[RMDB]
RNA sequence: GGGAACGACUCGAGUAGAGUCGAAAAGGCGACAAGUUCGCUUGUCGCCACGGGGUCCAGCCUGGAAAGGCAGGAGGUAUUGGAAUGGUCGGGCCGCCAUUCAACGCGGGACAUUCGUGUCCCGCAACUAAACCUACCGGUUCGCCGGUAGGUUUAGAAAAGAAACAACAACAACAAC
Reactivity to DMS in 0.01 (KOAc 150mM, MgCl2 10mM, bicine 150mM(pH8.5), 24C), signal-to-noise 1, nucleotides 027 to 126: g010g000c000g020a010c000a000a000g010u010u000c180g050c000u000u000g010u000c010g000c000c000a000c190g000g000g010g010u000c010c020a080g010c000c000u010g000g040a050a090a040g010g020c010a040g040g000a010g000g000u020a130u000u020g010g000a020a020u000g010g000u010c000g000g000g000c000c010g010c010c000a020u000u000c010a090a080c200g010c000g020g020g000a000c030a020u000u000c160g030u000g010u000c000c000c010g010c010a000a020
Reactivity to 2A3 in 0.01 (KOAc 150mM, MgCl2 10mM, bicine 150mM(pH8.5), 24C), signal-to-noise 2, nucleotides 027 to 126: g020g010c000g020a010c010a000a020g010u020u040c140g040c130u010u010g000u020c010g000c000c000a000c050g030g000g030g000u000c000c020a010g030c000c000u060g080g170a160a060a030g020g000c010a010g020g020a020g000g060u110a200u170u300g110g020a000a010u000g000g020u010c000g010g000g000c000c000g000c020c000a000u030u010c020a060a050c120g000c000g000g030g010a000c000a030u060u040c260g030u020g000u050c000c000c000g020c000a000a000